RNA sequence: GGGAACGACUCGAGUAGAGUCGAAAAGCGCGUAUUAUGCGCGCCGCUAUUAUAUACGCAUAUAUUAUCGCUAUGCGGCGAUACGCUAUAUAAUACGCUAUCGCUAUAUACGCCGCUAUUAUAUAGCGAUACCGCUAGCAUUCGUGCUAGCGGUAUCAAAAGAAACAACAACAACAAC
Reactivity to DMS in 0.01 (KOAc 150mM, MgCl2 10mM, bicine 150mM(pH8.5), 24C), signal-to-noise 4, nucleotides 027 to 126: g010c030g020c000g010u000a070u000u010a090u010g010c010g010c090g020c180c110g000c070u000a010u010u000a010u000a030u000a020c170g000c060a140u010a120u010a120u020u010a040u000c040g000c020u000a070u000g010c260g010g000c020g000a020u000a040c230g020c010u000a010u000a010u000a020a010u000a020c180g030c030u000a120u010c030g020c010u000a080u010a030u010a040c100g010c100c140g000c060u000a050u010u010a030u000a080u000a030g010c080
Reactivity to 2A3 in 0.01 (KOAc 150mM, MgCl2 10mM, bicine 150mM(pH8.5), 24C), signal-to-noise 4, nucleotides 027 to 126: g010c020g000c000g000u010a040u100u050a060u250g010c010g000c000g000c010c010g010c020u040a040u080u010a020u030a010u020a030c110g030c100a020u150a020u040a090u290u160a020u120c020g000c040u050a100u300g200c140g040g000c000g010a020u000a050c050g000c010u010a000u000a000u000a060a010u030a030c110g020c010u020a050u140c030g000c020u010a030u000a000u000a170c040g050c120c030g020c040u010a030u150u040a090u030a030u050a050g050c040
This 177-nucleotide RNA was probed chemically with DMS and 2A3. For DMS, 3,429 sequencing reads were counted. Values cover nucleotides 27 to 126. The data come from the RNA Mapping Database (RMDB), library OK2TRN. The RNA was probed in 150 mM KOAc, 10 mM MgCl2 and 150 mM bicine (pH 8.5) at 24 C.